[RMDB]
An RNA of 177 nucleotides, treated with 2A3 and DMS and read out base by base.
RNA sequence: GGGAACGACUCGAGUAGAGUCGAAAAGAAGAAAUGGAUUUAUCUGCCGUCCAAAUUCAAGAAGUACAAAAUGUCCUUCAUGCUAUGCAGAAAAUCUUAGAGUGUCCGAUCUGUUUGGAACUGAUCAACCCUAGACGAGAUUCGUCUCGUCUAGGGUAAAAGAAACAACAACAACAAC
Reactivity to 2A3 in 0.01 (KOAc 150mM, MgCl2 10mM, bicine 150mM(pH8.5), 24C), signal-to-noise 1, nucleotides 027 to 126: g110a030a000g020a050a110a060u170g020g020a000u000u130u000a300u050c010u000g000c000c000g040u080c010c010a190a050a000u140u020c050a070a050g000a020a040g050u060a020c030a010a270a050a300u260g000u030c010c000u000u010c000a000u070g010c030u160a060u230g000c010a000g000a000a060a000a010u060c010u040u080a070g060a060g230u130g040u020c000c010g050a070u000c020u090g140u140u040u230g110g060a030a050c010u030g000a070u010c010a000
Reactivity to DMS in 0.01 (KOAc 150mM, MgCl2 10mM, bicine 150mM(pH8.5), 24C), signal-to-noise 1, nucleotides 027 to 126: g010a110a070g000a160a090a130u030g010g000a000u000u000u000a090u000c030u000g000c030c280g000u010c070c080a020a040a090u000u010c050a080a050g010a030a030g000u000a000c040a070a080a090a130u000g010u000c060c000u000u000c010a070u010g010c280u030a040u060g010c010a000g000a030a050a040a010u000c000u000u020a090g020a110g010u000g010u000c050c020g010a030u000c040u010g000u010u010u000g010g020a070a190c060u000g000a090u000c050a110